[RMDB]
RNA sequence: GGGAACGACUCGAGUAGAGUCGAAAACUGGGUGGGCUGUGAUCCUAUAUGUAGGGCCGGCUAAGUCCUUGUUCCACUCCUUCUUGCAGUGGAUCUUGCCGCUUCUCUGAAGAUGAUUGAAAUGCCCACAGCACUUGCAGAGCAAGCAGAAAAGACACCACUGACCAUUAUUCGUAAUGGUCAGUGGAAAAGAAACAACAACAACAAC
Reactivity to 2A3 in 0.01 (KOAc 150mM, MgCl2 10mM, bicine 150mM(pH8.5), 24C), signal-to-noise 2, nucleotides 027 to 156: c010u050g030g060g000u020g000g000g000c000u040g130u120g290a040u020c000c020u100a050u040a080u300g170u170a040g020g000g000c060c090g000g000c020u080a010a010g040u080c050c000u060u170g080u100u000c010c000a010c000u070c010c050u140u300c070u120u230g040c120a000g000u000g000g000a010u010c050u010u030g020c010c000g060c070u260u060c040u020c010u020g050a080a030g060a200u150g010a040u050u080g040a030a070a070u120g010c000c000c000a000c000a000g020c020a030c000u020u040g010c010a000g010a020g160c000a050a000g010c020a000g050a070a080a000a010g040a020c030a000
Reactivity to DMS in 0.01 (KOAc 150mM, MgCl2 10mM, bicine 150mM(pH8.5), 24C), signal-to-noise 1, nucleotides 027 to 156: c030u000g010g000g010u010g000g010g040c030u000g040u000g040a100u030c020c020u000a060u010a030u010g010u000a040g000g000g000c120c020g050g080c050u000a050a120g000u010c020c020u000u000g000u000u000c000c010a020c030u000c040c040u000u000c110u030u000g030c090a050g040u010g030g020a040u010c030u010u020g010c010c030g010c060u000u010c010u010c040u030g000a070a040g000a120u000g010a110u000u010g010a090a080a100u000g000c030c010c030a030c020a070g040c060a010c000u000u000g030c030a100g040a070g030c010a030a050g000c000a150g010a060a110a100a100g010a210c040a150

Structure probing data (2A3 and DMS) for a 207-nucleotide construct.
The 2A3 profile rests on 730 reads.
Values are in units of 0.01, from 0 to 300, in steps of 10.